Structure probing data (DMS and 2A3) for a 170-nucleotide construct.
RNA sequence: GGGAACGACUCGAGUAGAGUCGAAAAUCAUCCCACUGUGUGCUUCAAAUAAACUUCGCGUUGUAAUUCCUGACUUCACCGUCUGGAAUCAGGUAGUCACAUAUCCCUCGCUUAACUACGCUGGGGCAAACAGAUGCGUUCGCGCAUCUGAAAAGAAACAACAACAACAAC
Reactivity to DMS in 0.01 (KOAc 150mM, MgCl2 10mM, bicine 150mM(pH8.5), 24C), signal-to-noise 7, nucleotides 027 to 129: u000c180a050u030c030c010c040a020c150u000g030u020g030u020g000c040u020u030c000a030a060a050u060a060a090a070c000u060u040c070g000c050g030u020u000g030u050a120a140u030u000c000c040u030g020a040c010u040u060c200a090c080c110g020u040c010u020g030g010a000a000u050c180a000g020g000u030a030g020u000c060a080c100a070u050a080u020c030c000c010u010c190g050c050u040u090a070a070c110u050a080c200g110c000u030g000g020g010g090c250a040a070a100
Reactivity to 2A3 in 0.01 (KOAc 150mM, MgCl2 10mM, bicine 150mM(pH8.5), 24C), signal-to-noise 9, nucleotides 027 to 129: u120c010a040u020c000c020c000a020c040u080g000u000g000u040g040c010u050u070c060a080a120a230u300a100a100a020c030u060u060c120g020c040g110u030u050g090u100a060a040u010u010c000c000u010g020a010c010u040u040c110a050c070c060g020u010c040u050g010g030a000a000u050c000a000g080g010u030a000g040u070c020a010c000a040u080a090u090c000c000c000u030c010g030c020u120u130a160a060c060u100a060c110g020c040u020g000g000g020g000c010a050a060a010
2A3 adducts were read by reverse transcription with SuperScript II with manganese.
The RNA was probed in 150 mM KOAc, 10 mM MgCl2 and 150 mM bicine (pH 8.5) at 24 C.
Reactivities are rounded to 0.1 and cut off at 0 and 3.